[RMDB]
RNA sequence: GGGAACGACUCGAGUAGAGUCGAAAAUGCGCUCAGGCUUUCGAUCCGUCGUUGGCCACGGCGGCAGACUUGCCUGAUGAGCGGCAGGGAAUCGUUACGGGACCACUUGUCCGAUGGUCCCAUACAGGAAUGAGCCUAGGUUCGCCUAGGCUCAUUCAAAAGAAACAACAACAACAAC
Reactivity to DMS in 0.01 (KOAc 150mM, MgCl2 10mM, bicine 150mM(pH8.5), 24C), signal-to-noise 1, nucleotides 027 to 126: u010g010c030g010c010u000c010a020g010g000c000u000u020u000c020g000a160u020c010c010g050u000c000g000u000u000g000g020c160c170a100c030g000g020c010g000g010c300a170g000a030c160u000u000g010c000c000u000g000a090u010g000a060g010c050g100g000c070a030g010g010g020a120a060u020c090g020u010u000a050c100g000g000g000a040c010c010a010c080u000u000g000u000c110c080g010a230u000g000g010u000c000c000c000a040u000a000c100a180g010